About this RNA: The data come from the RNA Mapping Database (RMDB), library OK2TST. Chemical mapping of a 177-nucleotide RNA with 2A3 and DMS. DMS adducts were read by reverse transcription with MarathonRT. For 2A3, 2,811 sequencing reads were counted.
RNA sequence: GGGAACGACUCGAGUAGAGUCGAAAACGUACUCCACAUCCAGGAUGUGCGGAGGGGCUGCCAUUCGAGACCUCCGCCUUGGUUUUGUUCAGAGCUAAAGGGAGGAAAAGCCCUCCCCUGAACAAAGCCUUUGCUUUCUAUUCGUAGAAAGCAAAGGAAAAGAAACAACAACAACAAC
Reactivity to 2A3 in 0.01 (KOAc 150mM, MgCl2 10mM, bicine 150mM(pH8.5), 24C), signal-to-noise 3, nucleotides 027 to 126: c020g030u040a050c030u050c020c000a050c020a100u060c020c040a010g120g050a110u130g090u120g090c010g010g030a000g030g000g090g090c040u100g100c090c070a180u180u150c070g070a030g020a100c010c000u000c000c000g030c020c000u010u010g000g000u050u050u010u010g000u000u020c010a020g030a050g090c120u240a210a110a080g010g000g010a010g010g000a080a210a100a070g040c010c000c020u010c030c000c010c010u000g000a000a000c000a000a000a000g020
Reactivity to DMS in 0.01 (KOAc 150mM, MgCl2 10mM, bicine 150mM(pH8.5), 24C), signal-to-noise 5, nucleotides 027 to 126: c150g010u010a110c080u000c010c020a070c090a120u010c050c080a130g000g000a070u010g020u010g010c000g020g010a020g010g000g010g020c020u000g010c090c100a200u010u010c110g000a070g020a220c010c000u000c010c000g020c030c090u000u000g010g010u010u000u000u000g010u000u000c010a010g000a200g020c220u010a080a110a200g000g000g000a020g020g000a070a090a120a230g010c230c000c000u010c000c010c000c000u000g000a010a010c000a000a020a040g000